RNA sequence: GGGAACGACUCGAGUAGAGUCGAAAACUGACCUUGUUCGCAAGGUCAGAAAGGGAAAUCGACUGAGCGGCGCCGACCGCCAAACAACCGGCAAAAAGAAAAAAACUGUAAGCUUCGGCUUACAGAACUCAUCAAUACUGUUCGCAGUAUUGAUGAGAAAAGAAACAACAACAACAAC
Reactivity to 2A3 in 0.01 (KOAc 150mM, MgCl2 10mM, bicine 150mM(pH8.5), 24C), signal-to-noise 3, nucleotides 027 to 126: c000u000g000a000c010c000u000u000g010u030u040c070g000c110a010a010g000g000u000c000a000g010a040a020a000g080g010g040a050a100a070u130c050g050a050c080u170g040a050g070c000g030g000c020g010c050c010g160a300c010c010g030c010c010a080a020a010c010a000a020c000c020g020g000c010a020a060a040a090a000g040a050a070a010a010a000a010a030c010u000g000u000a000a000g000c000u030u190c300g100g000c000u010u000a000c000a000g010a000a000
Reactivity to DMS in 0.01 (KOAc 150mM, MgCl2 10mM, bicine 150mM(pH8.5), 24C), signal-to-noise 2, nucleotides 027 to 126: c010u000g000a010c000c000u000u010g000u010u000c240g030c010a000a010g010g040u010c000a000g000a020a110a090g010g000g030a040a130a080u010c070g010a120c130u010g000a190g010c010g000g000c030g050c040c010g000a100c020c000g000c000c120a050a060a130c100a040a010c120c020g000g020c020a120a060a080a030a130g010a010a000a070a050a090a150a140c010u020g000u010a000a000g000c000u000u020c240g000g000c000u000u000a000c000a010g010a050a090